Structure probing data (2A3) for a 177-nucleotide construct. It was measured as part of the RMDB library RFMREP. For 2A3, 1,235 sequencing reads were counted. The reactions ran in a buffer of 150 mM KOAc, 10 mM MgCl2 and 150 mM bicine (pH 8.5), at 24 C.
RNA sequence: GGGAACGACUCGAGUAGAGUCGAAAAGAUUGGUUUUUGCUCCUGCACCAUGGUUGUCUGAGCACGGAGCAUGCUUGUCUGCUCAUACGCCAUGGUUCGUGAGCAGGAACCUCCACUGCCCACCACGCGAGGGUAUGUUGUUCGCAACAUACCCUCGAAAAGAAACAACAACAACAAC
Reactivity to 2A3 in 0.01 (KOAc 150mM, MgCl2 10mM, bicine 150mM(pH8.5), 24C), signal-to-noise 1, nucleotides 027 to 126: g040a050u100u120g000g000u000u000u000u020u010g000c000u020c000c020u030g000c030a020c000c000a000u000g080g010u130u300g040u000c020u030g000a010g030c060a010c140g050g040a080g030c120a080u100g020c060u140u100g010u190c040u010g030c000u010c000a000u000a000c020g010c000c000a010u000g010g030u000u010c010g040u040g000a000g000c000a000g000g000a020a010c000c020u000c020c020a130c020u040g030c030c000c000a040c020c060a100c090g150